The record gives the reactivity of an RNA of 177 nucleotides to 2A3 and DMS. For DMS the reverse transcriptase was MarathonRT. It was measured as part of the RMDB library TTRDES. The RNA was probed in 150 mM KOAc, 10 mM MgCl2 and 150 mM bicine (pH 8.5) at 24 C.
RNA sequence: GGGAACGACUCGAGUAGAGUCGAAAAGAUAUGGAACGUGCCAGACAUGAUGAGGGUCGGAAACGACCUGGCAUCAACAGCUGGACACGUUCCUAAGUCAAAACCAUUCUACUUCGGUAGAAUGGAACUCCCAGUAUUACUUCGGUAAUACUGGGAGAAAAGAAACAACAACAACAAC
Reactivity to 2A3 in 0.01 (KOAc 150mM, MgCl2 10mM, bicine 150mM(pH8.5), 24C), signal-to-noise 5, nucleotides 027 to 126: g000a010u020a010u080g000g000a000a010c000g000u000g000c010c000a020g020a160c170a300u300g010a010u000g000a040g010g020g010u010c010g010g000a020a020a010c000g000a000c000c000u020g100g290c010a000u010c030a040a290c120a150g070c010u020g000g110a180c000a000c000g000u000u000c000c000u000a000a000g000u000c020a010a020a090a160c000c000a000u000u010c000u000a020c020u040u080c300g180g000u000a000g000a010a000u000g000g000a010a020
Reactivity to DMS in 0.01 (KOAc 150mM, MgCl2 10mM, bicine 150mM(pH8.5), 24C), signal-to-noise 6, nucleotides 027 to 126: g000a010u000a190u000g010g000a020a000c010g010u000g010c010c000a000g010a070c180a160u010g010a010u010g010a300g010g010g010u010c000g010g000a020a040a120c010g000a010c000c000u000g000g010c030a000u000c000a020a050c280a070g000c020u000g000g020a240c010a000c000g000u000u000c000c000u000a000a070g010u000c030a150a080a090a160c000c010a010u000u000c000u000a010c000u000u000c250g040g000u000a000g010a000a010u000g000g010a040a090